An RNA of 177 nucleotides, treated with 2A3 and DMS and read out base by base.
It was measured as part of the RMDB library OK2TST.
For 2A3, 1,245 sequencing reads were counted.
RNA sequence: GGGAACGACUCGAGUAGAGUCGAAAACGGUGCCGACCGUGACAUCAAGGAAGGCGAUGUCGUCAAGCGCACCGGCGCAAUCGUCGACGUUCCGGUUGGUCCCGAACUGCUUGGCCGCGUGGUCGAAAUAUCACGGAGGCUUCGGCCUCCGUGAUAUAAAAGAAACAACAACAACAAC
Reactivity to 2A3 in 0.01 (KOAc 150mM, MgCl2 10mM, bicine 150mM(pH8.5), 24C), signal-to-noise 1, nucleotides 027 to 126: c020g000g000u040g000c000c010g000a010c000c000g000u070g000a020c010a020u060c090a060a090g210g040a100a090g150g000c050g000a000u000g100u220c010g000u050c020a100a090g010c060g070c110a040c050c060g030g010c000g000c050a060a180u060c010g030u050c020g010a060c050g070u110u010c040c040g000g020u000u000g060g010u050c000c020c000g000a020a010c020u080g000c010u080u090g040g020c030c000g070c080g090u120g010g030u000c030g000a130a100
Reactivity to DMS in 0.01 (KOAc 150mM, MgCl2 10mM, bicine 150mM(pH8.5), 24C), signal-to-noise 1, nucleotides 027 to 126: c050g000g000u000g020c000c000g010a020c050c040g020u000g020a020c010a030u000c110a190a130g000g010a170a150g020g000c000g000a000u000g000u010c040g010u020c030a050a210g010c080g020c070a020c060c050g020g010c000g010c040a070a000u000c010g020u000c010g000a060c050g000u000u000c180c000g000g010u000u000g020g020u000c200c000c000g020a110a090c100u000g000c040u000u000g010g020c040c040g010c200g060u000g010g020u010c000g000a050a120

As a SHAPE reagent, 2A3 marks flexible, mostly unpaired nucleotides at the ribose 2'-OH.